[RMDB]
RNA sequence: GGGAACGACUCGAGUAGAGUCGAAAACUUGUGCUCGGCUUGAGAGCGAUACGCGCUCGCUUGUGCUGAUUAUUAUACGCGUAUGCCACGACCCUGUCGCAACCCGGCUCGACACGGGUCUGGUCGCUCUGUGAGUAGCUUUCGAGCUGCUCGCGGGAAAAGAAACAACAACAACAAC
Reactivity to 2A3 in 0.01 (KOAc 150mM, MgCl2 10mM, bicine 150mM(pH8.5), 24C), signal-to-noise 9, nucleotides 027 to 126: c020u080u140g060u110g080c020u020c030g040g010c040u080u110g070a030g000a010g070c010g010a020u040a040c040g000c000g000c010u010c010g020c010u040u090g030u050g030c030u030g080a080u030u120a090u090u100a100u060a060c040g000c000g000u030a030u090g010c000c000a020c070g000a000c000c000c000u000g000u000c000g010c010a020a050c000c000c010g030g000c030u010c010g000a000c000a020c080g000g000g000u000c000u000g000g000u030c000g000c010
Reactivity to DMS in 0.01 (KOAc 150mM, MgCl2 10mM, bicine 150mM(pH8.5), 24C), signal-to-noise 9, nucleotides 027 to 126: c050u010u020g020u020g010c050u000c030g000g010c030u010u010g010a060g000a020g000c010g000a080u010a030c080g010c030g010c130u010c030g000c020u010u010g010u020g000c010u010g010a080u020u030a080u030u030a100u030a120c090g000c010g010u030a050u010g010c000c010a030c150g000a010c000c000c000u000g000u000c010g000c200a090a090c040c020c030g000g000c130u010c010g000a010c010a020c170g010g000g000u000c000u000g000g000u010c080g000c040